RNA sequence: GGGAACGACUCGAGUAGAGUCGAAAAACCAACUCGAGCGAGGCGGAGAUCGCGCGCCAGUUCGUGCGCGGCGACCUGAAGUUGCUUCGGCUUCUGCUUGGUCGCGUCCUGCGUGGAACGGCUCCUUCUUCACACCAGCCGGAGUUGGAAACUACCCCACUCUUCCGUACUUCGGUACGGAAGAGUGAAAAGAAACAACAACAACAAC
Reactivity to 2A3 in 0.01 (KOAc 150mM, MgCl2 10mM, bicine 150mM(pH8.5), 24C), signal-to-noise 2, nucleotides 027 to 156: a020c000c000a020a000c000u000c010g080a070g010c000g020a040g020g000c050g020g000a020g000a070u100c060g060c000g000c020g050c300c030a060g010u000u050c070g070u110g030c000g030c010g020g000c000g000a010c000c000u030g040a060a020g010u020u020g000c000u010u070c210g160g000c010u020u020c000u000g170c100u140u230g000g000u000c000g010c010g060u220c000c070u030g000c020g010u080g070g000a000a000c000g000g010c000u070c000c020u010u040c010u010u040c030a040c030a040c010c020a000g010c000c020g100g000a050g000u020u010g010g000a070a020a000c040u150a110c000c000c010